[RMDB]
RNA sequence: GGGAACGACUCGAGUAGAGUCGAAAAAGACCACCUCUACGGAGGUGGUCAAGUCACGUAGCUAGUACCAGGUUGCAAUACUAGAGCGUUAGUCCUGGGGCGUACGGUGGCAAUACGCUGCCACCGAUAAAACUUGAAUACUUCGGUAUUCAAGUAACACAUAUUGGGUGUUCGCACCCAAUAUGUGAAAAGAAACAACAACAACAAC
Reactivity to 2A3 in 0.01 (KOAc 150mM, MgCl2 10mM, bicine 150mM(pH8.5), 24C), signal-to-noise 3, nucleotides 027 to 156: a000g000a010c000c010a010c020c000u000c010u020a050c300g090g000a020g000g000u000g000g010u000c000a000a000g020u000c010a000c010g020u030a020g070c000u010a000g000u030a190c000c000a000g040g000u000u000g000c010a000a000u010a000c000u000a010g000a020g040c150g110u160u190a010g010u120c000c010u020g000g000g020g040c120g120u180a050c020g030g010u000g000g000c010a010a040u250a110c170g020c140u050g000c000c000a000c010c000g000a000u050a010a090a000a020c000u000u000g000a010a000u000a000c000u020u060c150g080g000u000a000u000u000c000a000a000g000u000a030a000
Reactivity to DMS in 0.01 (KOAc 150mM, MgCl2 10mM, bicine 150mM(pH8.5), 24C), signal-to-noise 2, nucleotides 027 to 156: a160g000a010c000c000a030c000c000u010c000u000a140c300g070g000a020g030g060u030g020g000u000c020a000a020g020u000c100a110c020g010u000a050g030c030u000a040g020u000a040c020c000a070g010g000u000u000g020c060a070a060u000a030c020u000a010g010a300g020c030g030u010u000a080g030u000c000c000u000g010g020g030g030c140g000u000a040c020g030g000u000g020g070c010a020a100u000a090c210g020c130u000g020c000c010a000c010c000g010a070u000a060a080a070a060c000u000u000g010a000a020u010a010c000u000u010c250g070g000u000a010u000u000c010a020a000g000u000a020a110
Chemical mapping of a 207-nucleotide RNA with 2A3 and DMS. DMS adducts were read by reverse transcription with MarathonRT. It was measured as part of the RMDB library M2RFPK. The DMS profile rests on 3,779 reads. The 2A3 profile rests on 2,514 reads.